Notes
Chemical mapping of a 207-nucleotide RNA with DMS and 2A3. DMS adducts were read by reverse transcription with MarathonRT. The RNA was probed in 150 mM KOAc, 10 mM MgCl2 and 150 mM bicine (pH 8.5) at 24 C. 2A3 adducts were read by reverse transcription with SuperScript II with manganese. The data come from the RNA Mapping Database (RMDB), library RNAMAK.
RNA sequence: GGGAACGACUCGAGUAGAGUCGAAAAAUUGAGUUCGCUCAAUGAUAAUCCUAAGUCGCAGACAUGAAUCUCCGUGUCGAGCUAUAUCGGAAACGAUAUAGCGAUGAGACACGGGAUUCAACAGCUGCGAUAUGGAAGAUAUACUGUUCGCAGUAAAAAAGUCAACAGUUUUCGAACUGUUGACUUUAAAAGAAACAACAACAACAAC
Reactivity to DMS in 0.01 (KOAc 150mM, MgCl2 10mM, bicine 150mM(pH8.5), 24C), signal-to-noise 2, nucleotides 027 to 156: a030u000u010g000a010g040u010u010c240g060c060u000c000a020a030u030g000a210u010a120a230u000c010c060u010a050a300g020u010c000g000c010a030g000a050c100a300u000g000a010a030u000c000u010c010c010g040u010g000u000c010g000a170g020c010u000a010u000a000u000c030g020g000a210a110a270c010g000a020u000a010u000a020g040c020g000a050u000g020a300g020a030c010a010c080g000g020g000a000u000u000c000a010a070c080a110g020c000u010g000c010g020a000u000a100u020g010g020a090a100g030a210u010a120u000a030c030u020g030u010u010c150g000c000a070g010u000a000a070a130
Reactivity to 2A3 in 0.01 (KOAc 150mM, MgCl2 10mM, bicine 150mM(pH8.5), 24C), signal-to-noise 2, nucleotides 027 to 156: a000u000u010g000a000g010u080u110c220g020c070u000c010a010a000u040g050a060u090a160a080u120c000c000u020a090a060g000u000c000g000c010a020g060a130c030a220u050g020a000a000u020c140u040c230c010g010u010g000u000c000g000a000g000c000u000a000u010a000u000c020g000g060a110a080a050c010g000a000u000a000u000a000g000c010g010a100u130g040a020g010a010c000a000c000g000g000g000a000u000u000c000a000a010c010a050g080c040u000g000c010g000a000u000a010u040g000g040a030a080g080a070u150a020u010a150c000u010g100u110u110c250g000c220a030g020u220a020a070a250